Structure probing data (2A3 and DMS) for a 177-nucleotide construct. For DMS the reverse transcriptase was MarathonRT. 2A3 adducts were read by reverse transcription with SuperScript II with manganese.

[RMDB]
RNA sequence: GGGAACGACUCGAGUAGAGUCGAAAAAGCCUCCCAAUUGGUCUGCUGUCAACGAAUUUUGACUACAAGAAGAUUGUUGACAUGCACGCCCUGGCGCCCGAUCAGGCAGCACGACUGGGAAAGAUGGGUCAUGUAUCAACUUCGGUUGAUACAUGACAAAAGAAACAACAACAACAAC
Reactivity to 2A3 in 0.01 (KOAc 150mM, MgCl2 10mM, bicine 150mM(pH8.5), 24C), signal-to-noise 2, nucleotides 027 to 126: a030g100c020c010u000c000c010c020a030a070u060u060g060g010u010c020u040g040c010u010g010u000c000a010a010c020g130a030a040u050u040u050u100g200a160c090u160a090c200a120a070g130a040a010g020a100u020u020g000u000u000g010a000c020a010u170g000c030a010c020g020c000c000c000u010g010g010c030g080c010c010c000g000a060u040c020a020g000g000c020a020g000c020a040c090g070a040c020u000g040g000g100a060a110a010g120a060u170g130g000
Reactivity to DMS in 0.01 (KOAc 150mM, MgCl2 10mM, bicine 150mM(pH8.5), 24C), signal-to-noise 2, nucleotides 027 to 126: a110g000c120c050u000c020c000c010a130a090u000u010g030g010u010c190u000g000c040u000g050u000c010a000a010c010g000a050a100u000u010u000u010g000a190c180u020a160c300a070a120g000a020a030g010a060u000u010g000u000u000g000a030c030a010u000g020c010a050c170g020c030c000c090u000g000g000c070g000c050c000c000g010a110u010c100a040g010g020c040a110g000c110a070c050g030a040c050u000g000g000g000a060a030a100g010a150u000g030g000